[RMDB]
RNA sequence: GGGAACGACUCGAGUAGAGUCGAAAAGCUGCGUGAGCCAUGGUAAAUGUCGCUGCGAUCCACGUCUUGUCGCAAAUCAACAAGAGAUUGAUCACGCUGCAGGAUGGUUGGCCCUUCGGUCGGCUCGUCAAGGUAGGCUGUUCGCGGCCUGCCUUGAAAAAGAAACAACAACAACAAC
Reactivity to DMS in 0.01 (KOAc 150mM, MgCl2 10mM, bicine 150mM(pH8.5), 24C), signal-to-noise 9, nucleotides 027 to 126: g010c020u000g000c020g010u020g000a060g010c040c020a080u000g010g020u030a050a100a080u030g010u010c050g010c060u010g010c040g000a100u010c030c040a070c060g010u010c020u000u000g010u010c300g000c040a090a110a040u010c040a020a020c040a140a120g020a120g010a130u010u000g000a050u010c080a060c130g000c010u000g010c010a020g000g010a030u000g000g000u010u000g000g000c040c010c020u000u010c070g000g000u010c060g000g010c030u000c000g010
Reactivity to 2A3 in 0.01 (KOAc 150mM, MgCl2 10mM, bicine 150mM(pH8.5), 24C), signal-to-noise 3, nucleotides 027 to 126: g030c020u030g000c000g050u060g030a020g020c030c000a050u100g070g030u220a100a110a060u170g040u060c030g010c020u020g000c010g020a060u020c010c010a020c010g030u000c010u010u020g010u010c020g000c010a010a010a030u020c010a000a040c020a110a090g090a030g040a280u000u030g000a010u020c030a000c150g000c000u010g000c000a000g000g010a010u040g050g040u060u050g010g000c000c000c000u020u050c020g030g010u020c010g000g010c010u000c010g020